[RMDB]
RNA sequence: GGGAACGACUCGAGUAGAGUCGAAAAUAGGGGCGGCAAUUCUCGGCGGAACCACUAACCGCCUAAAGUGAUGCGCCUUGCCAAGAAGCAGUCUAUGUAAGAGAUUGCGCUUAUCCUAAAGGUGUCAACCCGCCCUAUUAUUCGUAAUAGGGCGGGUAAAAGAAACAACAACAACAAC
Reactivity to 2A3 in 0.01 (KOAc 150mM, MgCl2 10mM, bicine 150mM(pH8.5), 24C), signal-to-noise 2, nucleotides 027 to 126: u110a000g120g030g020g100c050g040g000c060a000a050u170u080c030u030c060g010g000c000g010g020a040a020c060c000a060c160u030a100a000c000c000g040c020c000u140a100a030a010g020u050g010a030u010g010c020g000c000c000u000u100g000c000c000a050a030g000a160a000g000c000a020g020u000c060u090a120u270g250u150a300a090g120a000g000a160u030u050g030c090g040c000u010u010a010u030c000c000u070a080a040a000g250g000u180g090u110c000a000
Reactivity to DMS in 0.01 (KOAc 150mM, MgCl2 10mM, bicine 150mM(pH8.5), 24C), signal-to-noise 3, nucleotides 027 to 126: u040a100g000g010g000g010c020g010g030c020a100a120u000u000c030u020c200g000g020c000g000g020a100a070c120c170a070c170u020a120a070c020c010g000c010c000u030a010a030a070g000u000g000a070u000g000c260g010c000c000u080u030g050c050c050a100a060g010a090a070g010c050a030g000u000c010u020a040u060g000u020a140a150g010a010g020a010u010u000g010c000g000c010u000u000a040u020c030c000u000a030a090a120g000g000u020g050u010c140a110
Annotation: An RNA of 177 nucleotides, treated with 2A3 and DMS and read out base by base. High DMS reactivity at an A or C suggests that its Watson-Crick edge is free. The reactions ran in a buffer of 150 mM KOAc, 10 mM MgCl2 and 150 mM bicine (pH 8.5), at 24 C. Values cover nucleotides 27 to 126. 2A3 adducts were read by reverse transcription with SuperScript II with manganese.